Structure probing data (DMS and 2A3) for a 177-nucleotide construct. For DMS the reverse transcriptase was MarathonRT. The reactions ran in a buffer of 150 mM KOAc, 10 mM MgCl2 and 150 mM bicine (pH 8.5), at 24 C. The DMS profile rests on 3,030 reads. DMS (dimethyl sulfate) methylates the pairing face of unpaired adenines and cytosines.
RNA sequence: GGGAACGACUCGAGUAGAGUCGAAAAGACACGACGGAGACGUCGUGUCAAGUCCAGUGCGAAAGCACUGGACAAAUAAGGGCUGUUAUUCUCGCUGACUAUCAGCCCCAAACAAAAAAUGUCAGCAAAAUUUAUGAUAUUUCGAUAUCAUAAAUUUAAAAGAAACAACAACAACAAC
Reactivity to DMS in 0.01 (KOAc 150mM, MgCl2 10mM, bicine 150mM(pH8.5), 24C), signal-to-noise 3, nucleotides 027 to 126: g010a010c000a010c000g010a010c000g010g000a300g000a270c000g020u000c000g000u000g020u000c000a020a060g000u000c000c010a000g000u000g010c010g010a150a070a170g000c000a020c000u000g010g000a000c000a020a040a110u010a120a140g020g000g000c000u000g000u010u000a070u020u000c080u000c130g000c010u000g010a010c000u010a040u000c000a010g010c000c000c000c110a020a030a060c040a020a010a030a030a080a030u000g000u000c020a000g000c000a100
Reactivity to 2A3 in 0.01 (KOAc 150mM, MgCl2 10mM, bicine 150mM(pH8.5), 24C), signal-to-noise 2, nucleotides 027 to 126: g010a010c010a000c000g020a010c000g040g020a060g030a060c010g000u000c010g030u000g010u000c010a000a000g000u010c000c000a000g020u010g000c000g080a160a020a000g030c000a010c010u010g000g000a010c000a000a030a000u110a040a070g000g010g000c000u000g020u070u020a090u130u090c180u080c150g000c000u000g010a000c000u010a000u050c000a000g010c000c000c010c020a080a090a040c050a040a030a000a000a010a030u050g010u000c010a000g000c000a000